[RMDB]
RNA sequence: GGGAACGACUCGAGUAGAGUCGAAAAGGGGUCCCUCUUGUCAGGGUGGAGGUACGCUUGGAUUUAUACACUGAAGCCUCCACGGUGUAUUGUCAGCGUGCGAAGCCCUUGGAUUUAGAGGGACGGAGGCACCCAAACGAGUCCUUCGGGACUCGAACUAGAAAUCAUUGUUCGCAAUGAUUUCUAGAAAAGAAACAACAACAACAAC
Reactivity to DMS in 0.01 (KOAc 150mM, MgCl2 10mM, bicine 150mM(pH8.5), 24C), signal-to-noise 1, nucleotides 027 to 156: g030g020g010g040u000c000c000c000u000c010u000u000g020u000c020a040g010g040g000u000g000g020a300g060g010u000a000c020g020c020u000u020g040g010a110u000u010u000a060u000a020c000a020c010u000g000a040a140g040c010c030u000c020c020a270c000g000g020u060g020u000a030u000u000g000u000c040a060g000c010g030u000g000c000g000a280a300g010c040c000c020u010u010g030g010a120u000u000u000a050g050a010g040g010g000a040c020g000g000a040g060g010c010a100c020c000c020a030a110a170c020g000a050g030u000c000c010u010u020c300g050g040g030a000c000u000c030g010a020a180
Reactivity to 2A3 in 0.01 (KOAc 150mM, MgCl2 10mM, bicine 150mM(pH8.5), 24C), signal-to-noise 2, nucleotides 027 to 156: g020g010g020g010u000c000c000c000u000c010u020u040g030u040c030a020g010g030g000u040g010g080a200g000g300u040a010c010g010c020u100u130g130g000a060u210u290u170a030u080a000c020a000c000u030g070a190a030g060c020c050u050c050c010a010c010g020g000u010g000u000a010u020u020g030u060c030a020g010c020g000u010g020c040g030a040a000g000c000c000c000u000u030g040g000a030u230u120u130a000g010a000g000g010g000a000c010g000g010a010g000g020c000a060c000c000c000a010a030a040c010g000a000g000u000c000c000u050u110c200g050g030g000a000c000u000c000g000a000a010
Overview: Chemical mapping of a 207-nucleotide RNA with DMS and 2A3. The RNA was probed in 150 mM KOAc, 10 mM MgCl2 and 150 mM bicine (pH 8.5) at 24 C. DMS adducts were read by reverse transcription with MarathonRT. For DMS, 2,264 sequencing reads were counted.